[RMDB]
RNA sequence: GGGAACGACUCGAGUAGAGUCGAAAAUGUCAGUUUCGACUGACAAAAAAACCUUUGUGCUAUGGGAGCGAUAUGGAGGACAUCCCAUUGGGAUGUCUACCCACCUUUAUCGCGAAGAACAUAGCACUCUGGUAAAAAAACCACUUUCGAGUGGUAACACAUAAGUCAAGUUCGCUUGACUUAUGUGAAAAGAAACAACAACAACAAC
Reactivity to 2A3 in 0.01 (KOAc 150mM, MgCl2 10mM, bicine 150mM(pH8.5), 24C), signal-to-noise 4, nucleotides 027 to 156: u090g000u000c000a000g010u030u070u270c190g070a040c020u010g000a010c000a050a160a050a000a020a000a040c000c000u010u000u010g000u010g010c000u000a000u000g000g000g000a020g000c000g000a010u000a010u040g020g010a020g030g000a000c010a000u000c000c020c110a280u140u220g000g000g000a000u000g000u000c000u020a020c000c010c000a050c000c010u070u180u020a000u000c000g000c000g070a110a010g010a000a000c000a000u000a000g000c000a000c000u000c000u010g000g000u080a150a000a000a000a000a010a050c010c000a010c000u080u090u060c210g060a000g000u000g000g010u020a040a000
Reactivity to DMS in 0.01 (KOAc 150mM, MgCl2 10mM, bicine 150mM(pH8.5), 24C), signal-to-noise 2, nucleotides 027 to 156: u000g010u000c000a010g030u000u000u020c250g040a110c010u000g020a020c000a000a000a020a140a040a090a090c000c020u020u000u010g010u000g010c020u010a010u000g000g010g000a270g020c010g020a040u000a020u000g010g020a300g020g010a050c000a020u000c000c000c020a300u020u020g050g020g000a020u000g000u000c000u010a020c040c020c040a300c080c010u000u000u000a030u000c000g000c010g000a080a150g000a130a100c000a010u000a010g000c000a000c010u000c020u010g010g000u000a000a000a020a100a100a100a060c010c000a020c010u000u010u000c160g000a080g050u020g010g000u000a020a110
Chemical mapping of a 207-nucleotide RNA with 2A3 and DMS. Conditions: 150 mM KOAc, 10 mM MgCl2 and 150 mM bicine (pH 8.5), 24 C. For 2A3 the reverse transcriptase was SuperScript II with manganese.